[RMDB]
RNA sequence: GGGAACGACUCGAGUAGAGUCGAAAAGAUUGAUGCCCUAUCGUAUCUCCAACGCUGAGCGGCAAAUAUCACAGAUAAUCAGGAUCAUGAACAUUGGCAAUAACGCGACGGUGAUACAACCUGUUCAUAUUUAUCCCCUAUUCGUAGGGGAUAAAUAAAAAGAAACAACAACAACAAC
Reactivity to DMS in 0.01 (KOAc 150mM, MgCl2 10mM, bicine 150mM(pH8.5), 24C), signal-to-noise 8, nucleotides 027 to 126: g010a160u000u010g010a170u000g010c020c020c020u010a140u000c100g020u000a040u010c010u000c020c030a090a300c050g020c050u010g020a180g010c300g010g010c030a050a030a050u010a040u000c030a060c120a110g010a050u010a070a120u020c220a100g010g010a050u010c030a140u000g000a070a020c120a050u000u010g010g010c030a050a110u010a110a100c150g010c030g010a050c300g000g020u000g000a060u000a030c050a120a110c130c070u000g000u000u000c080a080
Reactivity to 2A3 in 0.01 (KOAc 150mM, MgCl2 10mM, bicine 150mM(pH8.5), 24C), signal-to-noise 4, nucleotides 027 to 126: g080a070u110u240g030a010u100g020c000c000c000u030a100u100c050g000u000a010u000c040u010c000c020a070a070c020g000c010u020g020a010g030c020g100g010c020a010a030a000u230a020u040c030a030c050a090g050a040u060a080a120u210c070a020g200g070a040u040c030a030u040g010a020a030c050a080u040u000g070g000c010a020a060u050a240a050c070g010c010g010a020c020g000g020u010g010a000u000a040c000a010a000c010c030u070g050u080u060c070a020